The record gives the reactivity of an RNA of 207 nucleotides to 2A3 and DMS.
RNA sequence: GGGAACGACUCGAGUAGAGUCGAAAACAACAAACCUUAAAUCUAGUUAAUUUGCUGCUAACAUGAAACUCUUUGGUUCUUUUAUUUUUGCCAGAUAAUUAGACACACAUCUAAAGCUUAGUCUUAAAUGGCUUAAGUGUAGCUAUUGAUUAGUGCAUAAUUAAUCGGUCUUCGGACCGAUUAAUUAAAAAGAAACAACAACAACAAC
Reactivity to 2A3 in 0.01 (KOAc 150mM, MgCl2 10mM, bicine 150mM(pH8.5), 24C), signal-to-noise 2, nucleotides 027 to 156: c110a020a020c030a060a100a060c030c010u180u220a100a090a050u130c070u070a000g020u060u050a040a020u070u100u200g000c000u000g000c000u020a020a080c000a060u040g060a160a090a050c060u100c010u140u100u180g030g000u140u040c030u040u180u110u120a170u020u160u020u120u120g030c010c000a000g000a050u070a100a130u100u020a010g060a040c020a000c010a000c000a160u000c040u130a120a060a020g060c050u080u060a010g000u030c000u010u110a070a130a100u100g010g010c000u010u080a020a020g040u030g020u070a000g010c000u030a040u020u120g040a040u040u070a010g020u020g040c020a010
Reactivity to DMS in 0.01 (KOAc 150mM, MgCl2 10mM, bicine 150mM(pH8.5), 24C), signal-to-noise 1, nucleotides 027 to 156: c070a050a110c030a070a110a120c050c070u010u000a060a120a070u010c040u000a190g040u010u010a020a090u000u000u000g030c010u000g010c000u000a110a090c040a080u010g040a120a160a040c040u000c070u010u000u010g030g010u000u000c010u000u000u010u000a100u030u050u010u000u000g020c040c060a180g040a110u000a020a120u010u010a020g040a060c030a090c010a040c030a130u010c110u010a120a030a100g000c070u000u010a050g000u000c080u010u010a060a090a080u010g040g000c000u000u000a000a040g070u000g070u000a070g010c010u000a040u000u020g000a070u000u000a040g030u000g010c040a130
About this RNA: It was measured as part of the RMDB library OK3TST.